An RNA of 177 nucleotides, treated with DMS and 2A3 and read out base by base. For 2A3, 2,129 sequencing reads were counted. Source: RMDB library M2PK50, as collected in RNAgym. For DMS the reverse transcriptase was MarathonRT. Reactivities are given for positions 27 through 126.

RNA sequence: GGGAACGACUCGAGUAGAGUCGAAAACUUGCAAGGUUCGCCUUGCAAGAAAUAAAAGCUCACCAACCAACAAAAAUAAGAGCAUGGUUGGAAAAAGAAUAAAAACAGCAGUGUUCGCACUGCUGAACUAGCAAUUACGAUUCGUCGUAAUUGCUAGAAAAGAAACAACAACAACAAC
Reactivity to DMS in 0.01 (KOAc 150mM, MgCl2 10mM, bicine 150mM(pH8.5), 24C), signal-to-noise 1, nucleotides 027 to 126: c000u000u020g000c010a030a020g030g020u000u000c180g010c010c020u000u010g010c000a000a040g010a070a060a110u020a110a040a120a250g000c010u000c070a190c030c000a000a030c000c000a050a050c090a050a110a130a060a220u010a210a140g010a090g010c110a060u000g000g010u010u000g010g010a010a090a140a110a060g000a140a080u010a070a020a100a090a080c000a010g010c000a000g020u000g010u000u010c190g020c030a010c000u010g010c000u000g000a010a040
Reactivity to 2A3 in 0.01 (KOAc 150mM, MgCl2 10mM, bicine 150mM(pH8.5), 24C), signal-to-noise 2, nucleotides 027 to 126: c000u000u000g000c010a000a010g010g020u050u080c160g100c070c030u000u000g010c000a000a010g010a000a020a000u010a000a050a000a020g050c010u050c050a090c000c000a000a010c000c000a020a060c010a030a200a140a090a060u290a240a110g050a000g100c120a050u030g030g000u000u010g000g000a050a030a060a010a040g020a020a050u100a020a110a030a000a030c000a010g020c010a000g000u000g060u090u120c210g010c090a000c010u020g010c000u010g010a000a000